[RMDB]
RNA sequence: GGGAACGACUCGAGUAGAGUCGAAAAGGGCCGGCUACUCUUCUUUUCCUUUCCUCGUCUUCAUCGGUCAGCCUUCUGAGUUCCUCUUCUUCCUCCUUGCUGAGGAUCUUUCCUCCCGCGGAGAGCUCCAGGAACCCCUUCGGGGGUUCCAAAAGAAACAACAACAACAAC
Reactivity to DMS in 0.01 (KOAc 150mM, MgCl2 10mM, bicine 150mM(pH8.5), 24C), signal-to-noise 3, nucleotides 027 to 129: g040g050g050c060c050g050g030c090u000a050c090u020c060u030u030c020u020u010u050u030c050c000u000u000u050c000c090u010c080g000u020c090u020u040c030a080u000c080g070g020u000c130a080g000c000c000u010u040c090u010g010a210g000u010u020c010c010u010c060u000u070c040u000u060c010c010u020c020c020u000u030g010c040u080g000a140g000g000a010u000c040u040u040u040c010c000u000c030c020c020g040c170g050g000a050g020a020g010c070u000c000c070a070
Reactivity to 2A3 in 0.01 (KOAc 150mM, MgCl2 10mM, bicine 150mM(pH8.5), 24C), signal-to-noise 2, nucleotides 027 to 129: g010g000g010c020c030g000g040c000u070a000c060u000c000u040u020c000u080u060u030u050c050c000u060u030u020c020c020u060c000g140u010c020u080u060c010a060u130c040g000g020u040c020a030g060c010c000u010u030c020u050g060a000g060u050u030c000c040u030c010u030u000c000u130u040c030c030u080c000c000u040u100g000c090u070g070a020g000g000a000u000c020u000u030u010c000c000u010c000c000c000g000c010g000g060a030g010a000g030c010u000c000c060a000

The data come from the RNA Mapping Database (RMDB), library 15KLIB. An RNA of 170 nucleotides, treated with DMS and 2A3 and read out base by base. DMS (dimethyl sulfate) methylates the pairing face of unpaired adenines and cytosines. For 2A3 the reverse transcriptase was SuperScript II with manganese. For 2A3, 2,528 sequencing reads were counted.